RNA sequence: GGGAACGACUCGAGUAGAGUCGAAAAGUCCUGGGGGAGUCGUGACCUAUUCCACCGGCGCUGGCCUGAUAUUGUAGGGGACAAUGGACGUCAGUGCUUGAGCAGGUGGCUUGCCCUACGCGGAGGAUCUUCGGACGUGGUUCGCCACGUUUGAAGGAAAAGAAACAACAACAACAAC
Reactivity to DMS in 0.01 (KOAc 150mM, MgCl2 10mM, bicine 150mM(pH8.5), 24C), signal-to-noise 9, nucleotides 027 to 126: g010u000c010c000u010g010g030g000g000g000a010g000u000c010g000u000g000a180c010c010u020a090u020u020c020c020a040c020c020g000g020c010g010c010u000g000g010c010c010u000g000a160u020a040u010u010g020u010a110g000g000g000g010a300c050a060a050u020g010g020a160c250g010u000c020a020g010u020g010c020u010u010g000a080g020c050a060g010g010u000g010g000c150u010u010g010c020c020c010u010a050c090g020c060g000g000a070g010g010a120
Reactivity to 2A3 in 0.01 (KOAc 150mM, MgCl2 10mM, bicine 150mM(pH8.5), 24C), signal-to-noise 9, nucleotides 027 to 126: g060u020c000c000u010g050g000g000g000g000a000g000u000c000g000u020g050a070c000c010u010a050u090u040c010c000a020c010c010g020g000c010g000c020u020g010g000c000c020u060g020a020u030a030u100u040g030u040a090g010g080g010g010a010c030a010a040u050g040g040a030c040g010u000c000a000g000u010g060c000u030u050g010a030g040c060a030g010g020u010g000g010c000u010u080g050c000c000c010u030a060c070g010c080g030g030a040g040g030a070